[RMDB]
RNA sequence: GGGAACGACUCGAGUAGAGUCGAAAAAAAAGGUGGACACUACAUCACCAAUACAAGUUUAAUGGCUACAUACGGCACUCAGUUUACACUUACAUUACAUAUGCAUUUUAACACAUCAACUAUAACAUCUGGUAUCAUAGUUCGCUAUGAUACCAGAAAAAGAAACAACAACAACAAC
Reactivity to 2A3 in 0.01 (KOAc 150mM, MgCl2 10mM, bicine 150mM(pH8.5), 24C), signal-to-noise 2, nucleotides 027 to 126: a000a000a010a000g030g010u030g000g010a040c010a010c150u070a040c010a060u030c000a020c000c000a000a020u090a070c040a070a090g000u010u080u150a040a070u100g020g000c010u000a010c030a060u080a050c050g000g000c010a010c010u050c010a040g000u060u090u010a000c060a000c010u060u080a020c010a090u040u070a020c000a020u120a010u060g030c020a010u000u040u030u060a090a020c040a000c010a090u090c050a040a060c040u150a080u070a280a020c010a060
Reactivity to DMS in 0.01 (KOAc 150mM, MgCl2 10mM, bicine 150mM(pH8.5), 24C), signal-to-noise 2, nucleotides 027 to 126: a080a020a040a040g000g000u000g010g000a140c090a040c090u010a080c040a090u000c040a090c010c000a130a050u000a060c180a110a040g000u000u010u020a110a070u000g000g000c020u000a020c030a110u010a060c070g000g000c030a060c080u000c070a020g000u000u000u000a130c100a050c050u000u020a090c090a010u000u000a080c080a050u000a020u010g030c040a040u000u000u000u000a020a080c050a090c060a040u000c050a010a040c080u000a070u000a060a060c140a130

Record summary:
The record gives the reactivity of an RNA of 177 nucleotides to 2A3 and DMS. For DMS the reverse transcriptase was MarathonRT. Source: RMDB library RFMREP, as collected in RNAgym. 2A3 adducts were read by reverse transcription with SuperScript II with manganese. The reactions ran in a buffer of 150 mM KOAc, 10 mM MgCl2 and 150 mM bicine (pH 8.5), at 24 C.